[RMDB]
RNA sequence: GGGAACGACUCGAGUAGAGUCGAAAAGGAACUGUGCCGUUGAGUCAGCUGGAGCGCGAGUGUGGCUUGGGAGAUUAGUUUUUCUCCUCGGGCGGUGAAGUCGUUUAAGAAGCUCGAUACGGGUGAGAACAAAGAGUUGUUUCGACAACUCUUUGUUAAAAGAAACAACAACAACAAC
Reactivity to 2A3 in 0.01 (KOAc 150mM, MgCl2 10mM, bicine 150mM(pH8.5), 24C), signal-to-noise 2, nucleotides 027 to 126: g070g020a060a040c040u060g020u090g080c000c020g030u030u020g040a050g060u060c040a010g020c020u050g030g040a070g030c090g030c010g020a050g030u180g000u060g060g050c000u030u050g010g020g010a020g010a020u030u050a090g180u000u140u050u120u040c010u050c000c000u020c040g050g000g000c040g010g030u060g020a050a010g060u080c010g020u000u000u090a070a050g040a030a000g010c020u010c020g020a050u050a130c050g020g040g010u070g030a060g030
Reactivity to DMS in 0.01 (KOAc 150mM, MgCl2 10mM, bicine 150mM(pH8.5), 24C), signal-to-noise 6, nucleotides 027 to 126: g010g000a100a120c060u000g010u000g010c030c020g020u010u000g010a140g010u000c070a060g020c040u010g010g000a100g010c120g010c050g010a080g030u010g020u000g010g010c040u000u010g010g000g000a020g010a030u000u000a130g010u000u010u000u000u000c010u000c010c000u000c120g010g000g010c040g010g000u010g010a090a090g000u010c040g010u000u000u010a090a130g010a130a150g010c010u000c020g010a110u010a050c060g010g010g010u000g000a120g000